RNA sequence: GGGAACGACUCGAGUAGAGUCGAAAAGAAAGGUUAAUGCAGCCCGGCAUUAACCAAAAGAAAACGGGCGAAAGAAAGAAAGCAUGUCGCAGGCCCGUGACAUGCAAAGAAAAGGGCCGAAAAGAAAGGUUUAGAGAUUCUUCGGAAUCUCUAAACCAAAAGAAACAACAACAACAAC
Reactivity to 2A3 in 0.01 (KOAc 150mM, MgCl2 10mM, bicine 150mM(pH8.5), 24C), signal-to-noise 2, nucleotides 027 to 126: g080a020a130a020g000g000u000u000a000a000u010g000c000a000g020c000c000c000g010g000c000a010u000u000a000a000c000c000a040a000a000a010g050a030a130a000a010c070g000g020g000c060g070a130a050a000g130a060a060a000g110a020a090a000g020c000a000u020g010u000c020g050c030a050g020g020c000c000c000g000u000g000a000c010a000u000g000c060a100a170a050g070a050a090a040a050g010g000g000c000c010g050a070a030a000a000g130a040a070a060
Reactivity to DMS in 0.01 (KOAc 150mM, MgCl2 10mM, bicine 150mM(pH8.5), 24C), signal-to-noise 1, nucleotides 027 to 126: g020a160a090a100g000g000u020u000a020a000u000g000c000a110g000c050c000c010g010g000c000a000u000u000a000a000c000c000a060a070a070a100g000a010a090a140a090c180g000g020g000c000g000a100a030a180g000a160a120a180g000a090a130a030g010c040a020u000g000u000c000g000c010a050g020g000c010c030c020g000u000g000a000c000a000u000g010c000a080a180a190g000a100a000a090a000g000g000g000c000c000g010a020a100a070a140g000a190a090a050